RNA sequence: GGGAACGACUCGAGUAGAGUCGAAAAACAAGGUCUGCCCCUUCCAGCCCAUUCUUUACGGGGACUUCAUGUCACCAGGCUCCGAUGUCAAGUCCUACGAGCUCAUCACCAGUGAGAGUAAGGUGAGGGGCCCAGGCAGGCGCCCUGCCCCUGGUGACCUACUCAUUACUUUCGAGUAAUGAGUAGGAAAAGAAACAACAACAACAAC
Reactivity to 2A3 in 0.01 (KOAc 150mM, MgCl2 10mM, bicine 150mM(pH8.5), 24C), signal-to-noise 4, nucleotides 027 to 156: a000c060a090a050g040g010u050c030u060g020c000c000c000c010u050u060c050c030a060g000c000c010c010a070u150u120c050u120u130u070a040c060g000g010g010g000a000c000u070u070c050a060u110g030u040c010a010c030c020a030g090g000c050u060c120c090g040a050u110g070u100c070a060a020g030u040c000c010u040a070c070g020a030g020c020u010c040a040u030c000a020c040c010a040g060u090g120a080g020a040g100u100a120a080g010g000u040g090a030g000g010g000g010c000c020c000a020g020g040c050a030g030g010c020g060c040c020c000u030g000c000c000c020c000u000g000g000u010g010a000
Reactivity to DMS in 0.01 (KOAc 150mM, MgCl2 10mM, bicine 150mM(pH8.5), 24C), signal-to-noise 2, nucleotides 027 to 156: a070c030a070a080g030g000u000c030u000g010c040c040c010c020u000u010c040c020a170g000c010c010c010a140u010u010c090u000u000u000a050c060g010g020g010g000a090c000u010u000c060a100u010g020u010c020a070c020c030a100g000g020c010u000c040c030g040a120u010g000u000c020a080a080g000u000c020c020u010a140c060g000a060g020c020u000c030a070u000c020a060c020c030a190g030u010g010a120g000a220g040u020a080a100g020g000u000g030a060g020g000g050g010c000c040c000a030g020g000c050a110g000g000c020g000c050c010c010u000g000c020c030c010c010u000g000g010u000g000a090